[RMDB]
RNA sequence: GGGAACGACUCGAGUAGAGUCGAAAACGCAGGUUCGAAUCCUGCACGACCCACCAAUCGCUAAGGUGGAAGCGGUAGUAAAACGUGAAGGAUAACGUUGCAUGAGCAACGGCCCGAAGGGCGAGACGCGUCUCUUCGUAUUCGUACGAAGAGACGCAAAAGAAACAACAACAACAAC
Reactivity to DMS in 0.01 (KOAc 150mM, MgCl2 10mM, bicine 150mM(pH8.5), 24C), signal-to-noise 1, nucleotides 027 to 126: c100g080c010a020g000g010u010u000c170g000a300a160u000c000c000u000g000c030a090c090g000a160c010c000c000a070c000c050a040a150u000c040g000c000u000a200a030g000g050u000g000g000a100a260g030c010g000g090u000a270g080u010a120a040a170a050c000g000u000g010a180a040g000g030a030u060a050a110c000g000u000u000g020c000a240u000g000a220g000c000a000a000c000g000g000c050c000c000g000a300a030g000g000g010c030g000a020g000a010c220
Reactivity to 2A3 in 0.01 (KOAc 150mM, MgCl2 10mM, bicine 150mM(pH8.5), 24C), signal-to-noise 1, nucleotides 027 to 126: c050g000c010a000g030g000u050u050c020g000a000a030u010c000c010u010g000c000a010c010g090a050c000c000c000a010c000c040a030a060u060c020g010c080u110a030a060g000g040u010g010g010a020a040g030c020g070g020u150a030g040u040a050a060a050a030c060g070u060g080a120a040g040g020a050u090a110a040c020g000u000u000g040c000a040u270g120a070g120c000a020a000c000g010g000c020c000c020g050a070a090g040g050g000c050g000a020g010a010c110